[RMDB]
RNA sequence: GGGAACGACUCGAGUAGAGUCGAAAACGCAGAUAGCCGUAGACGCCCGUGAAGUUACGGCACACGUCCUCAGGAAUUGGCACCGGUCCACCGAGAGCGCGGGCACCCCAAACGAUUUGUGCGGUGCAAUACGCCACAGAUUCGUCUGUGGCGUAUUAAAAGAAACAACAACAACAAC
Reactivity to 2A3 in 0.01 (KOAc 150mM, MgCl2 10mM, bicine 150mM(pH8.5), 24C), signal-to-noise 1, nucleotides 027 to 126: c080g040c020a040g030a250u140a090g050c000c030g010u010a030g050a220c040g030c010c020c060g000u020g090a130a020g070u070u070a010c020g000g000c020a000c010a000c030g050u050c010c040u060c020a050g100g060a110a150u070u120g040g000c020a000c050c000g020g050u000c020c020a070c030c050g030a060g000a010g100c070g000c000g050g040g000c000a030c010c000c000c000a050a130a060c110g070a180u020u020u300g100u120g030c050g000g000u000g010c000
Reactivity to DMS in 0.01 (KOAc 150mM, MgCl2 10mM, bicine 150mM(pH8.5), 24C), signal-to-noise 3, nucleotides 027 to 126: c090g010c130a110g020a110u000a050g010c010c010g040u000a040g020a100c110g030c030c010c020g010u000g000a080a100g010u000u010a010c030g010g010c020a150c130a080c030g000u000c030c020u000c040a110g020g010a060a060u020u010g000g030c010a020c030c030g010g000u000c020c010a100c060c080g010a070g010a090g010c040g010c030g000g010g000c020a290c060c000c030c030a050a090a090c170g010a120u010u000u000g020u020g010c050g000g020u000g010c030